[RMDB]
RNA sequence: GGGAACGACUCGAGUAGAGUCGAAAAAGUCGAAGCCGAACUCGUUGUUCGUGCCGUAGGUGACGUCGGCGUGGUAGGCGACGCGGCGCUCGGCGGGGGUCAUGCCGCCCAGGAUCACGCCCACCUACCCUGAGGUAUCGUUCGCGAUACCUCAGGGAAAAGAAACAACAACAACAAC
Reactivity to DMS in 0.01 (KOAc 150mM, MgCl2 10mM, bicine 150mM(pH8.5), 24C), signal-to-noise 2, nucleotides 027 to 126: a050g000u020c020g020a140a180g010c020c030g000a080a070c040u010c250g000u010u000g020u010u000c010g050u010g060c030c080g000u000a040g000g020u000g000a160c160g010u000c160g010g020c000g020u000g010g000u010a070g000g000c050g030a060c070g030c070g000g000c050g010c050u010c070g000g020c160g000g010g000g010g000u000c040a020u010g000c020c030g020c010c010c190a120g030g010a050u000c030a050c020g000c010c000c020a010c050c010u000a030
Reactivity to 2A3 in 0.01 (KOAc 150mM, MgCl2 10mM, bicine 150mM(pH8.5), 24C), signal-to-noise 2, nucleotides 027 to 126: a000g190u070c030g040a060a030g040c000c000g020a040a000c020u010c100g260u120u190g050u060u010c050g090u090g020c000c020g070u030a000g000g060u030g020a050c140g170u160c010g000g000c020g000u000g010g040u010a050g000g060c040g000a010c020g010c010g010g000c030g060c060u040c030g210g010c080g060g060g010g000g020u080c050a090u050g020c000c000g010c000c020c000a060g040g060a000u020c010a030c030g010c000c000c000a010c010c010u040a070